[RMDB]
RNA sequence: GGGAACGACUCGAGUAGAGUCGAAAAGAUAUGGACCAAUCAUAUGGACUCCUUGGACCUCGGAAACGAGCUAGGAGUUUAUGAGUUGGUCCUAAGUCAAACCGUUAUGGGUUCGCCCAUAACGGAACGAGCAUGUAACGUUCGCGUUACAUGCUCGAAAAGAAACAACAACAACAAC
Reactivity to DMS in 0.01 (KOAc 150mM, MgCl2 10mM, bicine 150mM(pH8.5), 24C), signal-to-noise 1, nucleotides 027 to 126: g000a050u000a300u010g010g010a000c000c000a000a040u010c020a010u000a080u010g030g000a000c000u000c000c010u020u000g000g010a110c300c000u000c000g010g000a080a040a130c010g000a020g000c010u000a020g000g000a010g000u000u000u000a000u000g000a090g000u000u000g010g000u000c000c000u000a000a030g000u000c050a060a140a140c010c000g000u000u000a010u000g000g000g020u000u000c300g030c000c050c010a000u000a010a000c000g000g000a000a010
Reactivity to 2A3 in 0.01 (KOAc 150mM, MgCl2 10mM, bicine 150mM(pH8.5), 24C), signal-to-noise 2, nucleotides 027 to 126: g020a020u020a010u110g000g010a000c000c000a000a030u050c020a040u050a090u230g300g050a030c000u010c020c000u060u100g050g170a300c020c000u000c000g000g040a030a060a030c000g000a020g020c020u030a010g000g000a000g050u010u010u020a000u000g070a090g300u040u020g010g010u000c000c010u000a020a000g040u000c050a060a050a100c000c000g000u000u000a000u010g030g010g040u010u140c300g100c050c000c000a000u010a000a000c020g000g000a000a010
Record summary: Source: RMDB library TTRDEL, as collected in RNAgym. This 177-nucleotide RNA was probed chemically with DMS and 2A3. For DMS, 1,134 sequencing reads were counted. For DMS the reverse transcriptase was MarathonRT. The reactions ran in a buffer of 150 mM KOAc, 10 mM MgCl2 and 150 mM bicine (pH 8.5), at 24 C.